Conditions: 150 mM KOAc, 10 mM MgCl2 and 150 mM bicine (pH 8.5), 24 C. Chemical mapping of a 177-nucleotide RNA with DMS and 2A3. For DMS the reverse transcriptase was MarathonRT. For 2A3, 931 sequencing reads were counted. The DMS profile rests on 1,007 reads.

[RMDB]
RNA sequence: GGGAACGACUCGAGUAGAGUCGAAAACGAUCAUGUUUAUGAUGUUGCUGCUUUGCAAGCACAAUCUUCUGGUGUGCUGCCAGAUAAACCUGUGCUGUACACCCAAAGUACUGCGCUUAGUAGCGCAAUGAGCGCAGGGAUUCGUCCCUGCGCUCAUAAAAGAAACAACAACAACAAC
Reactivity to DMS in 0.01 (KOAc 150mM, MgCl2 10mM, bicine 150mM(pH8.5), 24C), signal-to-noise 1, nucleotides 027 to 126: c040g000a080u040c070a030u000g020u000u010u030a070u000g000a080u000g010u010u000g010c040u020g000c010u000u000u060g030c090a120a060g030c000a010c030a040a080u000c100u000u000c090u000g010g000u000g010u000g010c010u000g000c010c000a010g000a050u010a070a080a100c270c040u000g010u010g000c010u000g020u000a010c050a060c070c020c120a000a010a010g000u010a070c290u000g000c000g010c000u000u010a060g040u000a060g020c000g050c110a050
Reactivity to 2A3 in 0.01 (KOAc 150mM, MgCl2 10mM, bicine 150mM(pH8.5), 24C), signal-to-noise 1, nucleotides 027 to 126: c030g000a010u110c040a060u090g090u120u180u090a140u090g080a080u020g020u190u300g000c000u010g060c030u120u050u010g080c120a170a120g020c000a020c010a010a090u020c000u070u010c120u130g010g000u000g010u000g010c000u010g000c000c010a010g020a080u210a010a040a010c000c000u060g100u300g010c000u000g000u000a000c000a010c000c010c010a000a000a010g020u050a060c170u020g010c070g000c010u000u040a000g040u090a000g080c000g000c030a000